[RMDB]
RNA sequence: GGGAACGACUCGAGUAGAGUCGAAAACUGGUGCGCUGUUAACCGAGGUAAAUAAUAACCGGAGUCUCUCCGGCGACAAUUUACUGGUGGUUAACAACCUUCAGAGCAGCAAGUAAGCCCGAAUGCCCCAGAGUGGAUCAUUCGUGAUCCACUCUGGAAAAGAAACAACAACAACAAC
Reactivity to DMS in 0.01 (KOAc 150mM, MgCl2 10mM, bicine 150mM(pH8.5), 24C), signal-to-noise 2, nucleotides 027 to 126: c020u010g000g000u010g000c130g000c060u000g000u030u030a000a020c000c000g000a300g000g000u000a000a010a010u000a050a090u010a300a100c000c010g010g000a030g010u030c160u040c040u000c020c000g000g000c020g000a140c300a040a000u000u000u000a000c000u000g000g110u030g010g000u000u010a000a000c000a020a000c020c040u030u000c050a040g010a070g000c010a010g020c070a100a100g000u000a080a160g010c000c010c000g000a150a090u050g020c240c140
Reactivity to 2A3 in 0.01 (KOAc 150mM, MgCl2 10mM, bicine 150mM(pH8.5), 24C), signal-to-noise 3, nucleotides 027 to 126: c000u040g040g100u030g080c110g000c010u010g000u020u000a000a000c000c000g020a040g000g000u010a000a000a010u060a040a040u050a020a000c000c000g030g000a020g190u080c080u020c000u000c160c000g000g000c000g020a020c030a050a010u000u000u000a000c010u020g030g140u160g050g000u010u010a000a000c000a000a000c000c000u050u080c010a020g020a020g080c020a000g030c010a110a090g060u100a070a040g040c010c020c010g020a090a080u110g010c020c010